[RMDB]
RNA sequence: GGGAACGACUCGAGUAGAGUCGAAAAGGAGUCCCACGAGCUGUAUAUCUUGGACCGCCGCGGCGACGGUGCGCCCGAGUUCCACUUGCGAAGCAAGCGAAUCCGCGCACACUCGACGCACUUGCGCUACGACAUAGUAGUUCGCUACUAUGUCGUAAAAAGAAACAACAACAACAAC
Reactivity to 2A3 in 0.01 (KOAc 150mM, MgCl2 10mM, bicine 150mM(pH8.5), 24C), signal-to-noise 4, nucleotides 027 to 126: g090g010a080g100u010c000c020c010a020c040g040a040g050c070u090g110u170a100u030a050u230c040u040u090g040g030a040c020c030g030c020c030g010c040g030g000c010g020a030c040g010g010u010g000c010g000c020c090c030g060a060g020u030u020c040c020a100c040u020u020g010c080g140a160a050g030c010a020a000g000c000g030a030a020u030c030c020g000c010g000c020a000c000a040c030u040c010g020a020c010g010c010a040c040u050u150g020c040g000c050
Reactivity to DMS in 0.01 (KOAc 150mM, MgCl2 10mM, bicine 150mM(pH8.5), 24C), signal-to-noise 9, nucleotides 027 to 126: g020g020a190g010u000c010c000c020a220c110g010a090g020c040u000g010u000a080u000a090u000c040u000u000g010g000a100c100c030g000c060c180g010c050g010g010c020g010a060c190g010g020u000g010c020g010c020c100c050g010a050g000u000u010c050c060a120c010u000u000g000c010g010a150a130g010c020a020a020g020c300g000a040a040u000c040c050g010c200g010c030a040c060a030c030u000c010g000a060c030g000c010a100c130u000u010g010c050g000c130